[RMDB]
RNA sequence: GGGAACGACUCGAGUAGAGUCGAAAAGAUAUGGACGUUUGAGGGAGAAUAUGGGUCGGAAACGACCUUAUAUUCGAGGAUCUCGGGACGUCCUAAGUCAAAAGGUCUAGGCGUUCGCGCCUAGACCGAAACGACUACUGUUCGCAGUAGUCGUUUCAAAAGAAACAACAACAACAAC
Reactivity to DMS in 0.01 (KOAc 150mM, MgCl2 10mM, bicine 150mM(pH8.5), 24C), signal-to-noise 3, nucleotides 027 to 126: g010a020u000a050u010g000g000a010c000g010u000u000u000g010a010g010g000g000a020g010a030a010u000a010u000g010g000g020u000c000g010g000a020a020a030c000g020a020c000c000u000u010a010u000a000u000u000c000g000a100g010g000a020u010c000u000c000g000g020g010a000c010g020u000c000c000u000a000a060g000u000c010a110a110a140a190g010g010u000c000u000a000g010g010c000g030u010u020c300g030c000g020c000c000u000a010g000a000c000c000
Reactivity to 2A3 in 0.01 (KOAc 150mM, MgCl2 10mM, bicine 150mM(pH8.5), 24C), signal-to-noise 3, nucleotides 027 to 126: g010a000u010a000u060g000g010a000c020g010u010u050u100g010a010g020g000g010a040g000a010a010u030a010u060g040g000g000u010c000g000g000a010a000a000c000g000a000c000c000u020u050a030u010a000u020u000c000g010a060g010g000a000u000c010u000c040g050g040g060a010c010g010u000c010c000u010a000a000g000u000c010a020a040a140a230g010g000u010c000u020a000g020g000c000g070u090u190c300g020c010g030c170c000u000a000g000a000c000c000